[RMDB]
RNA sequence: GGGAACGACUCGAGUAGAGUCGAAAACGAUUUCAAGAACAUCCUCAAGUGUCAUGUUGCGCCGCUGUGUUGUGUCAUGUUUGAGAGGGAAAUCGGUGCGUGCAUGGGCACCGCGUGAUUCGGUGCGGAGUCGUGAUUUAUUCGUAAAUCACGACUCAAAAGAAACAACAACAACAAC
Reactivity to DMS in 0.01 (KOAc 150mM, MgCl2 10mM, bicine 150mM(pH8.5), 24C), signal-to-noise 3, nucleotides 027 to 126: c040g000a040u010u020u010c030a100a090g020a080a110c160a100u060c040c020u010c050a050a080g020u020g010u050c030a040u000g010u010u030g020c060g020c030c080g010c090u000g010u010g010u000u020g030u000g000u020c040a060u000g000u000u000u010g030a110g000a060g000g000g000a040a020a040u020c020g010g000u010g010c080g000u010g000c030a080u000g020g000g030c020a010c000c010g040c110g020u040g000a140u050u020c000g020g000u000g000c050g020
Reactivity to 2A3 in 0.01 (KOAc 150mM, MgCl2 10mM, bicine 150mM(pH8.5), 24C), signal-to-noise 5, nucleotides 027 to 126: c010g030a070u100u120u140c070a110a060g120a110a050c020a120u080c000c020u040c030a050a050g050u020g070u190c010a020u050g030u080u150g030c010g010c000c040g040c110u110g000u000g030u210u100g020u040g020u050c020a040u060g110u080u080u140g090a080g020a030g030g060g000a040a030a030u070c030g010g000u050g040c060g010u040g040c020a060u070g010g100g060c010a000c010c000g000c020g000u060g020a120u160u110c000g000g040u020g010c020g000